An RNA of 177 nucleotides, treated with DMS and 2A3 and read out base by base. Reactivities are given for positions 27 through 126. The 2A3 profile rests on 3,716 reads. Conditions: 150 mM KOAc, 10 mM MgCl2 and 150 mM bicine (pH 8.5), 24 C.
RNA sequence: GGGAACGACUCGAGUAGAGUCGAAAAGAUAUGGACGGAGGCGCCAGCUUUCUUUAGUCGGAAACGACUAAGAAAGCUGGAACUACGCUUAAGUCCUAAGUCAAAUCUCAGCCUUCGGGCUGAGAAACUCCUAUAUGAGGUUCGCCUCAUAUAGGAGAAAAGAAACAACAACAACAAC
Reactivity to DMS in 0.01 (KOAc 150mM, MgCl2 10mM, bicine 150mM(pH8.5), 24C), signal-to-noise 2, nucleotides 027 to 126: g000a050u000a300u010g010g020a010c000g010g030a200g010g000c030g040c010c010a000g020c010u000u000u000c000u010u000u010a000g020u010c000g000g000a110a100a220c010g010a030c000u000a000a000g000a020a010a000g000c000u000g010g000a020a010c100u010a300c020g010c000u010u000a190a170g010u000c000c000u000a020a100g000u000c030a070a090a200u000c010u000c000a000g020c000c000u010u000c190g010g000g030c000u010g000a000g000a010a030a150
Reactivity to 2A3 in 0.01 (KOAc 150mM, MgCl2 10mM, bicine 150mM(pH8.5), 24C), signal-to-noise 2, nucleotides 027 to 126: g030a000u070a050u180g010g000a010c000g020g080a040g030g050c000g000c020c020a010g030c000u030u050u040c020u090u170u240a010g000u000c000g000g000a170a060a020c010g000a010c000u000a000a000g060a000a090a000g010c070u060g000g000a000a000c020u070a000c010g000c010u020u030a000a000g010u030c000c010u000a080a000g020u000c020a090a070a150u020c000u000c000a000g000c010c020u110u160c300g100g000g000c000u000g010a000g000a010a000a010